This 177-nucleotide RNA was probed chemically with DMS and 2A3. The 2A3 profile rests on 15,096 reads. It was measured as part of the RMDB library M2PK50. The reactions ran in a buffer of 150 mM KOAc, 10 mM MgCl2 and 150 mM bicine (pH 8.5), at 24 C. For 2A3 the reverse transcriptase was SuperScript II with manganese. Values cover nucleotides 27 to 126.
[RMDB]
RNA sequence: GGGAACGACUCGAGUAGAGUCGAAAAGAGUAGUAGUUCGCUACUACUCAAAGGCACAAAAGGCACAGUUCUAAAGUGCAUGGAACACGCCAAGUGGCCGUGAAAGUAAAUCCUUCGGGAUUUACAAGUUUCAUGUCAUAUUCGUAUGACAUGAAACAAAAGAAACAACAACAACAAC
Reactivity to DMS in 0.01 (KOAc 150mM, MgCl2 10mM, bicine 150mM(pH8.5), 24C), signal-to-noise 7, nucleotides 027 to 126: g010a000g010u000a000g010u000a000g020u010u010c250g040c010u000a010c000u000a000c000u000c000a010a060a080g000g010c010a030c030a060a060a130a140g010g010c000a130c140a140g000u000u000c010u000a040a090a130g030u010g020c210a110u000g000g000a010a030c010a180c160g000c010c010a050a230g000u010g010g010c000c010g000u010g010a090a080a110g000u000a000a000a010u000c000c000u000u020c220g020g010g000a000u000u000u000a000c010a060a090
Reactivity to 2A3 in 0.01 (KOAc 150mM, MgCl2 10mM, bicine 150mM(pH8.5), 24C), signal-to-noise 7, nucleotides 027 to 126: g010a000g000u010a000g000u000a000g010u010u060c200g020c090u000a000c000u000a000c000u000c000a010a020a010g000g000c030a020c010a080a170a030a070g010g000c020a030c060a140g020u030u000c020u060a140a130a100g250u210g110c040a030u110g000g000a020a000c020a010c050g000c020c000a050a050g120u160g120g030c030c010g000u030g090a070a030a000g000u000a000a000a000u010c010c000u020u040c210g050g000g000a000u000u010u000a000c000a010a020